[RMDB]
RNA sequence: GGGAACGACUCGAGUAGAGUCGAAAACAUGACUUUUUUAGUCCAGUCAAUGGGGUUCAGUCUGGCACGUAUACAUUAGCUACUUCCAUUGCGUGCAAAUUACUUAGCGCCUCGCGGGGAUCCGCGGAAAUACCAUUAGUUUCGACUAAUGGUAUUUAAAAGAAACAACAACAACAAC
Reactivity to DMS in 0.01 (KOAc 150mM, MgCl2 10mM, bicine 150mM(pH8.5), 24C), signal-to-noise 9, nucleotides 027 to 126: c080a110u030g000a040c020u000u010u030u030u030u030a090g010u010c030c130a060g010u010c070a070a090u010g000g000g010g010u010u010c080a060g010u010c100u000g010g010c020a030c050g010u000a050u030a080c140a080u030u020a100g020c080u020a060c090u010u010c050c040a070u010u010g000c030g010u000g000c040a050a050a070u020u020a050c070u010u010a070g010c060g010c020c010u000c020g020c020g000g000g010g000a080u050c010c000g010c020g000g000
Reactivity to 2A3 in 0.01 (KOAc 150mM, MgCl2 10mM, bicine 150mM(pH8.5), 24C), signal-to-noise 9, nucleotides 027 to 126: c050a080u120g020a050c020u030u070u050u060u120u300a030g030u030c030c030a020g040u050c040a050a130u110g010g000g020g000u020u040c020a010g030u010c030u060g060g000c010a000c030g030u050a050u080a110c110a100u130u150a040g040c040u070a050c040u140u030c050c020a060u040u080g010c010g000u010g000c010a020a060a080u110u040a050c030u040u060a020g020c020g090c020c000u040c020g000c010g000g010g020g080a080u080c000c010g000c000g010g010